[RMDB]
RNA sequence: GGGAACGACUCGAGUAGAGUCGAAAAUCGUCGCGCUCUUCACGAAGUACAGGUUCACGUUCUGCGAGCCGCCGAGCGUGUCGAACACCUGCACCGACGUCGUGUAGUUGUAGCUCGUCGGAUCGGAGCCUGCAGUGACUUUCGAGUCACUGCAGGCAAAAGAAACAACAACAACAAC
Reactivity to DMS in 0.01 (KOAc 150mM, MgCl2 10mM, bicine 150mM(pH8.5), 24C), signal-to-noise 2, nucleotides 027 to 126: u000c070g010u000c060g010c060g000c000u000c010u010u000c020a100c050g010a090a080g040u010a080c070a060g010g010u000u000c010a050c000g000u000u010c030u000g010c000g000a060g040c030c020g050c010c050g000a020g010c020g000u000g000u000c150g010a080a080c060a060c040c000u010g020c020a090c020c050g040a100c220g000u020c110g030u000g000u000a010g000u000u000g000u000a200g010c050u010c000g010u000c000g010g020a130u000c000g000g000a180
Reactivity to 2A3 in 0.01 (KOAc 150mM, MgCl2 10mM, bicine 150mM(pH8.5), 24C), signal-to-noise 2, nucleotides 027 to 126: u030c000g050u000c000g020c000g020c040u000c000u120u030c030a050c130g090a110a010g030u120a020c030a110g080g000u010u080c020a030c120g000u100u060c040u130g020c010g050a060g120c070c050g000c030c000g000a000g000c030g000u030g070u060c010g020a040a000c020a060c000c030u030g010c020a030c030c040g300a300c060g040u190c060g000u010g010u010a110g050u010u060g090u100a020g030c010u030c000g020u010c020g000g000a030u060c030g040g020a000